An RNA of 207 nucleotides, treated with 2A3 and DMS and read out base by base.
The RNA was probed in 150 mM KOAc, 10 mM MgCl2 and 150 mM bicine (pH 8.5) at 24 C.
2A3 adducts were read by reverse transcription with SuperScript II with manganese.
The data come from the RNA Mapping Database (RMDB), library OK3TST.

[RMDB]
RNA sequence: GGGAACGACUCGAGUAGAGUCGAAAAAGCCACUGUUCAGGGGAGGAAAGGGGUGCAAAAGUUCCCCUUCCAACACUUUAGCAGGGAGAACAGAACAAAAGGAAGAUGGAGGGGCUCCUGAGUCUGGAAGCUGCUUCUUCCUCCCUAUGGUCCACGAGCAUCAUUUUAUGUUCGCAUAAAAUGAUGCAAAAGAAACAACAACAACAAC
Reactivity to 2A3 in 0.01 (KOAc 150mM, MgCl2 10mM, bicine 150mM(pH8.5), 24C), signal-to-noise 3, nucleotides 027 to 156: a010g070c050c000a070c060u030g030u090u050c050a020g000g030g030g010a020g000g010a040a100a040g050g020g010g020u060g010c080a120a170a060a090g020u060u060c000c020c010c000u000u010c010c010a040a020c060a010c020u080u060u070a030g030c040a020g010g080g010a080g060a100a030c060a100g030a100a010c040a040a070a030a020g020g000a020a060g030a030u080g030g020a030g030g030g020g020c000u020c000c000u090g080a090g130u060c090u040g020g000a040a040g020c010u090g020c000u040u010c000u030u000c000c000u020c010c060c000u060a100u070g030g000u010c040c040a070c140g080a050
Reactivity to DMS in 0.01 (KOAc 150mM, MgCl2 10mM, bicine 150mM(pH8.5), 24C), signal-to-noise 1, nucleotides 027 to 156: a090g010c000c010a060c050u000g040u000u000c060a080g000g010g090g000a200g040g020a050a010a080g010g010g010g010u000g020c050a070a120a110a160g030u000u000c010c000c000c010u020u000c010c010a060a080c070a080c010u000u010u010a090g000c050a070g000g000g000a130g010a080a160c090a070g030a060a170c060a020a070a130a130g010g000a050a050g000a100u000g000g000a080g000g020g030g030c000u000c020c080u000g030a190g000u000c060u010g020g020a030a100g020c040u000g010c020u000u000c020u000u000c010c000u010c000c000c000u020a190u000g000g010u000c000c010a110c130g000a280